The record gives the reactivity of an RNA of 177 nucleotides to 2A3 and DMS. Reactivities are rounded to 0.1 and cut off at 0 and 3. DMS adducts were read by reverse transcription with MarathonRT.
[RMDB]
RNA sequence: GGGAACGACUCGAGUAGAGUCGAAAAUAAAUAACUGUCUUUGUGCUAAGGUGCAUCUAGUGCAGAUAGUGAAAUAGACUAGCACCUACUGCCCUAAGUGCUCCUUCUGGCAUAAGGGGAAAAUAAGCCUAAGAGUACAGUUCGCUGUACUCUUAGGAAAAGAAACAACAACAACAAC
Reactivity to 2A3 in 0.01 (KOAc 150mM, MgCl2 10mM, bicine 150mM(pH8.5), 24C), signal-to-noise 3, nucleotides 027 to 126: u080a000a070a030u140a060a050c050u060g070u120c010u010u030u040g020u010g020c010u030a030a000g000g000u010g000c000a020u010c010u010a000g010u000g000c010a020g120a200u040a000g040u050g050a040a040a110u120a080g140a070c100u080a050g040c020a020c010c010u010a030c000u000g000c000c000c030u010a040a020g000u010g000c000u020c000c000u050u050c090u050g000g000c000a000u000a010a000g070g010g010g020a000a050a030a120u150a050a010g050
Reactivity to DMS in 0.01 (KOAc 150mM, MgCl2 10mM, bicine 150mM(pH8.5), 24C), signal-to-noise 4, nucleotides 027 to 126: u010a060a110a070u010a070a170c090u010g000u000c010u000u000u010g030u000g000c020u010a030a030g000g000u000g010c010a040u000c050u010a000g000u010g000c020a010g020a200u000a050g010u000g000a050a040a110u010a130g010a140c280u010a110g010c030a070c060c030u000a100c030u000g000c000c040c000u000a010a060g010u000g000c000u010c010c010u000u000c180u010g030g000c010a000u010a020a040g000g010g010g010a060a080a090a090u020a110a140g000